Description:
The record gives the reactivity of an RNA of 177 nucleotides to DMS and 2A3. The DMS profile rests on 6,164 reads. Values cover nucleotides 27 to 126. Source: RMDB library OK1LIB, as collected in RNAgym. For 2A3, 3,517 sequencing reads were counted. DMS adducts were read by reverse transcription with MarathonRT.
[RMDB]
RNA sequence: GGGAACGACUCGAGUAGAGUCGAAAACAAGGAAUCAAGAUCUAUAUGAUGCUGCAAAAGCAUAUGCUGAACAACUCAAAGAAAAUGGUGUGAUUAACUACAGUGUAUUAGACUUGACAGCAGAAGACAAGGCAACUGAAUUCGUUCAGUUGCCUUGAAAAGAAACAACAACAACAAC
Reactivity to DMS in 0.01 (KOAc 150mM, MgCl2 10mM, bicine 150mM(pH8.5), 24C), signal-to-noise 4, nucleotides 027 to 126: c080a140a110g010g030a110a170u000c090a030a110g000a060u000c000u000a050u020a070u020g020a180u020g000c000u000g020c120a060a060a020a010g010c050a030u000a090u010g020c010u000g000a140a090c110a050a050c070u010c070a030a090a120g000a070a080a070a090u010g000g000u010g000u000g000a130u000u010a020a050c170u010a120c040a020g050u010g000u000a020u000u000a040g000a040c030u000u000g040a060c030a060g010c010a030g020a140a050g010a120
Reactivity to 2A3 in 0.01 (KOAc 150mM, MgCl2 10mM, bicine 150mM(pH8.5), 24C), signal-to-noise 5, nucleotides 027 to 126: c050a030a060g180g080a020a080u140c070a070a060g140a180u000c060u040a090u020a070u220g160a050u040g020c000u020g000c020a050a230a040a000g000c000a020u000a020u020g010c000u010g040a050a000c030a070a010c030u060c130a070a090a090g210a110a120a030a030u150g090g000u080g020u030g070a240u140u090a090a020c060u100a080c050a000g000u000g000u020a030u100u010a030g060a050c020u010u030g010a080c020a010g020c000a030g040a130a000g050a040